[RMDB]
Notes:
The data come from the RNA Mapping Database (RMDB), library OK1LIB. Structure probing data (DMS and 2A3) for a 177-nucleotide construct. The reactions ran in a buffer of 150 mM KOAc, 10 mM MgCl2 and 150 mM bicine (pH 8.5), at 24 C. For DMS, 1,176 sequencing reads were counted. For 2A3 the reverse transcriptase was SuperScript II with manganese.
RNA sequence: GGGAACGACUCGAGUAGAGUCGAAAAGACCUAGUCCAUCUACCUAGGUCAAGUAGGUGGUGAAAGUAGCCAAAGAAGCUCGACGGGAAGUAGGUCGAGCGACUACUUCCGAAGCUACGAAAAGAAAGGGUAUUCCUUACUUCGGUAAGGAAUACCCAAAAGAAACAACAACAACAAC
Reactivity to DMS in 0.01 (KOAc 150mM, MgCl2 10mM, bicine 150mM(pH8.5), 24C), signal-to-noise 1, nucleotides 027 to 126: g000a160c000c000u080a050g010u000c060c080a240u020c040u000a160c180c000u000a110g000g000u000c160a000a280g000u000a000g000g040u000g020g000u030g000a180a090a200g000u000a000g000c040c100a040a140a030g010a130a300g000c010u000c010g000a000c000g000g000g000a040a060g210u020a120g000g000u000c000g040a020g000c050g030a060c020u000a040c040u000u000c000c020g020a250a140g000c000u000a010c000g000a090a020a150a120g000a110a050a170
Reactivity to 2A3 in 0.01 (KOAc 150mM, MgCl2 10mM, bicine 150mM(pH8.5), 24C), signal-to-noise 2, nucleotides 027 to 126: g110a000c000c060u030a000g100u000c000c000a060u000c000u050a060c000c000u070a030g040g120u060c030a010a010g000u000a000g000g010u000g040g020u110g000a020a010a000g070u020a000g000c010c030a230a070a000g010a030a040g040c060u030c000g000a000c050g030g150g000a280a060g180u220a030g040g250u110c020g000a000g000c000g000a000c020u050a060c000u070u000c000c020g060a080a000g020c000u020a010c020g040a030a040a020a040g070a000a000a000